[RMDB]
RNA sequence: GGGAACGACUCGAGUAGAGUCGAAAAUCGGCGUUCUUUACUACGGAGAUCCAACAUCAGUUGCGCGGUACUUUGGCGUGGCGCUCAUUGUUGCCGGGGUCAUCACGCUCAAGCUCGCGCACUGAGGGACCAAACACACAUUCGUGUGUGUUUGGUCAAAAGAAACAACAACAACAAC
Reactivity to DMS in 0.01 (KOAc 150mM, MgCl2 10mM, bicine 150mM(pH8.5), 24C), signal-to-noise 2, nucleotides 027 to 126: u000c080g020g000c060g050u000u000c120u000u010u000a080c120u000a100c120g020g000a130g000a110u010c010c040a120a190c130a160u000c010a010g010u010u010g020c000g070c000g000g010u010a110c000u010u000u000g000g000c000g030u000g000g000c300g000c000u000c020a070u000u010g010u000u000g010c080c070g020g000g010g000u000c030a060u010c010a010c030g010c000u010c190a020a000g000c170u000c030g020c020g020c000a020c000u000g000a050g000g000
Reactivity to 2A3 in 0.01 (KOAc 150mM, MgCl2 10mM, bicine 150mM(pH8.5), 24C), signal-to-noise 2, nucleotides 027 to 126: u120c000g030g030c020g080u120u060c050u080u120u090a070c060u050a040c040g080g000a030g010a040u000c030c030a090a090c030a140u000c000a000g080u240u150g030c010g000c010g010g000u060a160c010u000u060u050g010g000c010g010u000g000g030c050g000c000u000c020a100u120u300g170u180u060g100c050c040g030g010g000g000u090c000a040u040c000a010c000g000c000u000c050a000a010g000c030u020c010g000c010g000c020a000c000u000g000a000g010g060